The record gives the reactivity of an RNA of 177 nucleotides to DMS and 2A3. Conditions: 150 mM KOAc, 10 mM MgCl2 and 150 mM bicine (pH 8.5), 24 C. Reactivities are rounded to 0.1 and cut off at 0 and 3. For DMS, 4,414 sequencing reads were counted. For 2A3, 9,724 sequencing reads were counted. It was measured as part of the RMDB library TTRDEL.
RNA sequence: GGGAACGACUCGAGUAGAGUCGAAAAGAUAUGGACCUAAAAGUCGUCGAUAAGCGUAUCGGAAACGAUGACGCUUUUGACGACGUCGCUAGGUCCUAAGUCAAAUCCGACUGUUCGCAGUCGGAAACCUAAGCCAUUUGUUCGCAAAUGGCUUAGGAAAAGAAACAACAACAACAAC
Reactivity to DMS in 0.01 (KOAc 150mM, MgCl2 10mM, bicine 150mM(pH8.5), 24C), signal-to-noise 4, nucleotides 027 to 126: g010a060u010a300u020g000g010a010c000c000u000a000a100a170a280g010u000c000g020u000c010g000a020u000a000a010g010c000g030u000a050u000c000g000g000a110a090a150c000g010a010u000g020a030c000g010c000u000u000u000u000g000a010c010g020a010c000g000u010c240g010c220u000a000g000g000u000c000c010u000a010a060g010u000c020a070a080a090u000c010c010g000a010c000u000g010u000u000c180g020c010a010g010u000c000g010g000a000a030a050
Reactivity to 2A3 in 0.01 (KOAc 150mM, MgCl2 10mM, bicine 150mM(pH8.5), 24C), signal-to-noise 3, nucleotides 027 to 126: g050a000u080a050u150g000g000a000c010c010u030a080a120a050a090g000u000c000g000u000c030g040a050u050a300a000g000c000g010u000a010u000c010g010g030a080a050a040c010g000a020u090g220a040c000g000c000u020u010u000u000g000a010c010g010a000c000g000u120c020g030c140u020a000g000g000u000c000c000u000a110a010g040u000c050a070a020a130u010c000c000g000a010c010u000g070u070u130c300g000c180a000g000u030c010g000g000a040a010a000